[RMDB]
RNA sequence: GGGAACGACUCGAGUAGAGUCGAAAACACUCCUGCUGAUGGUAGCAAAGACGUUUUCGUUCACUUCUCUGCCAUUCAGGGCGCUGGUUUCAAAACUCUGGCAGAAGGCCAGCAAGUUGAAUUCACCAGAGAUAGGCAAGUUCGCUUGCCUAUCUCUAAAAGAAACAACAACAACAAC
Reactivity to DMS in 0.01 (KOAc 150mM, MgCl2 10mM, bicine 150mM(pH8.5), 24C), signal-to-noise 1, nucleotides 027 to 126: c300a140c100u000c030c000u010g010c260u020g000a040u020g000g060u010a020g010c300a060a080a010g000a080c070g000u030u020u010u000c070g030u000u010c050a120c120u000u010c040u020c020u000g000c030c010a040u010u010c030a000g000g010g010c180g010c090u000g000g000u010u000u020c060a040a140a070a020c050u020c050u000g000g000c020a280g030a090a040g000g010c000c000a000g010c140a030a000g050u000u000g000a050a100u000u000c070a150c260c090
Reactivity to 2A3 in 0.01 (KOAc 150mM, MgCl2 10mM, bicine 150mM(pH8.5), 24C), signal-to-noise 2, nucleotides 027 to 126: c020a000c050u000c000c000u040g000c110u100g040a050u010g070g000u010a000g020c120a130a090a000g010a060c040g000u060u000u230u000c010g010u170u100c070a030c050u080u010c050u000c000u040g000c010c000a010u120u090c000a050g020g030g000c080g020c050u050g020g020u000u060u050c030a010a000a060a110c010u000c020u110g000g000c000a070g040a300a000g300g020c000c000a010g000c050a070a020g040u010u030g010a050a040u070u060c030a010c050c040
The data come from the RNA Mapping Database (RMDB), libraries RFM100 and RFMREP. An RNA of 177 nucleotides, treated with DMS and 2A3 and read out base by base. DMS adducts were read by reverse transcription with MarathonRT. The RNA was probed in 150 mM KOAc, 10 mM MgCl2 and 150 mM bicine (pH 8.5) at 24 C.